[RMDB]
The data come from the RNA Mapping Database (RMDB), library RFM100. The record gives the reactivity of an RNA of 177 nucleotides to DMS and 2A3. DMS adducts were read by reverse transcription with MarathonRT. For 2A3, 5,157 sequencing reads were counted. For DMS, 1,922 sequencing reads were counted.
RNA sequence: GGGAACGACUCGAGUAGAGUCGAAAAGAAAGAACCCAUUAUGGGAUAAAUGUGAGCUCAGGAGCGAUGAAUAAAUCCUUUCAUCACUCCUCAUUACUCCCGAGCUCACAUUUAUUUCAAAAUGAAACCAUGCACUUGUUUUCGAACAAGUGCAUGGAAAAGAAACAACAACAACAAC
Reactivity to DMS in 0.01 (KOAc 150mM, MgCl2 10mM, bicine 150mM(pH8.5), 24C), signal-to-noise 2, nucleotides 027 to 126: g020a140a190a100g010a140a170c030c010c010a140u000u020a110u010g000g000g000a000u000a000a000a000u000g010u000g010a030g000c030u000c000a030g000g010a010g030c140g000a000u000g030a030a010u000a100a160a160u050c250c110u000u030u000c010a000u000c000a060c000u000c030c000u000c010a050u080u010a140c250u000c000c000c000g000a000g000c000u000c000a000c000a000u000u000u000a000u010u000u020c000a000a070a050a020u000g000a100a090a150
Reactivity to 2A3 in 0.01 (KOAc 150mM, MgCl2 10mM, bicine 150mM(pH8.5), 24C), signal-to-noise 4, nucleotides 027 to 126: g130a010a100a010g040a090a080c020c010c000a010u110u080a060u050g000g000g000a000u000a000a000a000u000g000u010g000a000g000c000u000c010a010g000g000a000g010c020g010a000u010g000a020a010u110a150a130a130u230c050c030u000u010u010c000a010u000c000a010c010u010c000c000u000c000a020u030u120a050c030u020c030c020c000g000a000g000c010u000c000a000c000a000u000u000u000a000u000u000u010c000a000a020a000a010u070g020a020a000a010